About this RNA
Chemical mapping of a 177-nucleotide RNA with DMS and 2A3. Conditions: 150 mM KOAc, 10 mM MgCl2 and 150 mM bicine (pH 8.5), 24 C. For DMS, 2,281 sequencing reads were counted.
[RMDB]
RNA sequence: GGGAACGACUCGAGUAGAGUCGAAAAAUAUAACGCCAGAAUCAUUGGCUGCAAGGAAUGCUGACAGAAAAAAUUCCUUUUUCAAGGAAGAUGAAGUAAUUCCAGAAAAGUUUAGAGGUAAACUAAACAUCAUUAUCCAGUUCGCUGGAUAAUGAUGAAAAGAAACAACAACAACAAC
Reactivity to DMS in 0.01 (KOAc 150mM, MgCl2 10mM, bicine 150mM(pH8.5), 24C), signal-to-noise 3, nucleotides 027 to 126: a070u000a080u010a090a100c150g010c000c000a040g010a140a150u000c130a110u000u000g010g020c000u000g010c150a100a140g000g010a030a010u000g010c000u010g000a130c150a090g020a000a010a070a080a030a140u000u000c010c000u020u010u010u020u000c220a030a030g000g010a010a030g000a070u000g010a300a020g010u000a040a070u000u010c010c000a140g000a090a050a090a060g000u000u000u000a000g000a090g000g000u000a060a060a080c010u010a050a020a100
Reactivity to 2A3 in 0.01 (KOAc 150mM, MgCl2 10mM, bicine 150mM(pH8.5), 24C), signal-to-noise 2, nucleotides 027 to 126: a000u230a020u020a070a020c070g010c010c020a010g070a070a180u200c040a160u150u010g000g000c000u010g080c020a050a080g010g000a030a010u030g020c000u010g070a120c020a020g240a060a090a060a000a000a110u020u030c000c000u030u040u020u030u200c060a000a010g000g020a000a000g020a020u050g010a000a000g000u050a100a130u010u030c000c010a000g100a040a090a010a010g010u020u070u060a100g000a050g100g070u080a050a050a000c020u020a040a010a030